[RMDB]
Structure probing data (DMS and 2A3) for a 177-nucleotide construct. For DMS the reverse transcriptase was MarathonRT.
RNA sequence: GGGAACGACUCGAGUAGAGUCGAAAACUAGUGACUUGUAAUCAGGCACCACUACCCCAGGGCCAAAGAGUGAAGUAGAUAAAAUUUGUCCUAAAUCAAGAAGUAUUUACUGAGUAUCUAUUUAGUCACCGUAUAGCUGAUUCGUCAGCUAUACGGUAAAAGAAACAACAACAACAAC
Reactivity to DMS in 0.01 (KOAc 150mM, MgCl2 10mM, bicine 150mM(pH8.5), 24C), signal-to-noise 3, nucleotides 027 to 126: c180u000a060g020u000g010a110c030u000u010g020u010a160a170u000c090a050g000g010c030a070c040c050a050c080u000a120c060c000c000c050a080g020g000g000c040c060a050a070a040g000a050g020u000g000a120a030g010u000a020g000a050u000a030a070a050a170u000u000u010g020u010c070c090u010a030a050a150u040c040a060a040g000a120a090g010u000a020u000u000u010a040c020u010g010a200g000u000a040u000c020u000a050u010u000u010a040g000u000c100
Reactivity to 2A3 in 0.01 (KOAc 150mM, MgCl2 10mM, bicine 150mM(pH8.5), 24C), signal-to-noise 2, nucleotides 027 to 126: c030u030a010g030u030g110a050c010u030u080g060u160a080a080u150c040a060g000g040c050a050c170c000a030c030u090a060c010c000c020c030a030g040g000g000c030c030a010a100a000g080a020g020u060g040a090a010g020u020a020g010a080u080a040a110a060a060u060u100u070g040u050c000c060u020a050a050a060u060c010a020a010g070a070a000g070u030a070u050u090u030a030c010u010g020a020g010u040a040u140c030u030a120u060u160u080a010g010u060c030